[RMDB]
RNA sequence: GGGAACGACUCGAGUAGAGUCGAAAAGGCUGCGCCGCUAGACCGCCAGCACGGGAAGUUGGCUUACCAUGCGGUGACUUACGGAUGGCUGCUGUCCGGCUUGGCUCGUGCAGUGACCGGCAAAGGCGCUACCAGUUAUGUUCGCAUAACUGGUAGCAAAAGAAACAACAACAACAAC
Reactivity to DMS in 0.01 (KOAc 150mM, MgCl2 10mM, bicine 150mM(pH8.5), 24C), signal-to-noise 3, nucleotides 027 to 126: g010g010c050u000g010c060g060c010c030g020c040u010a060g010a120c070c070g000c090c020a090g010c020a030c040g000g000g000a090a090g000u000u020g010g010c030u000u010a100c040c030a050u000g000c030g000g000u010g000a100c090u000u020a060c050g000g000a070u000g010g000c090u000g010c080u000g000u020c050c000g020g000c020u000u010g010g040c020u000c040g000u000g000c060a110g000u000g000a080c150c030g000g000c090a050a070a120g020g000c100
Reactivity to 2A3 in 0.01 (KOAc 150mM, MgCl2 10mM, bicine 150mM(pH8.5), 24C), signal-to-noise 4, nucleotides 027 to 126: g080g000c000u020g010c020g000c010c000g000c010u010a020g030a190c020c020g000c010c010a020g000c010a020c040g080g000g010a050a060g020u080u060g030g000c000u020u040a040c010c020a050u110g090c050g050g030u060g110a100c010u050u110a010c020g030g070a070u060g100g030c030u050g010c020u010g100u080c030c000g020g000c020u070u060g100g000c000u020c070g010u040g000c010a040g020u010g070a050c010c000g010g020c060a090a080a070g100g000c060